[RMDB]
RNA sequence: GGGAACGACUCGAGUAGAGUCGAAAAGAUAUGGAUCGACUGCAUGGGAGCUCGUGGUCGGAAACGACCAUCGAGCGAAGAACAUGUUCGAUCCUAAGUCAAAUGAGGUUUAGUUCGCUAAACCUCAGUAUGCUACAGAGUUCGCUCUGUAGCAUACAAAAGAAACAACAACAACAAC
Reactivity to DMS in 0.01 (KOAc 150mM, MgCl2 10mM, bicine 150mM(pH8.5), 24C), signal-to-noise 5, nucleotides 027 to 126: g000a020u000a050u010g000g000a020u000c000g010a020c300u000g000c010a010u000g010g010g010a170g030c000u000c010g020u000g000g000u000c000g020g010a000a010a020c000g010a010c000c010a010u020c050g010a000g020c000g000a030a090g000a170a160c010a010u000g000u000u000c000g000a020u000c000c000u000a010a070g000u000c010a070a120a190u010g010a010g000g010u000u000u000a010g010u010u000c300g040c010u000a000a010a010c000c000u000c010a000
Reactivity to 2A3 in 0.01 (KOAc 150mM, MgCl2 10mM, bicine 150mM(pH8.5), 24C), signal-to-noise 4, nucleotides 027 to 126: g000a010u020a010u060g000g000a010u010c000g020a010c110u170g020c040a020u030g010g030g150a300g010c000u010c010g010u010g010g010u000c000g000g000a000a010a000c000g010a000c000c000a040u160c100g000a000g000c010g020a010a010g040a010a000c000a000u010g020u030u010c000g000a010u000c000c000u000a010a000g000u010c020a000a130a300u160g000a000g020g000u000u010u010a020g010u040u070c300g010c180u000a000a010a000c000c010u000c000a000

Source: RMDB library TTRDES, as collected in RNAgym.
This 177-nucleotide RNA was probed chemically with DMS and 2A3.
Values cover nucleotides 27 to 126.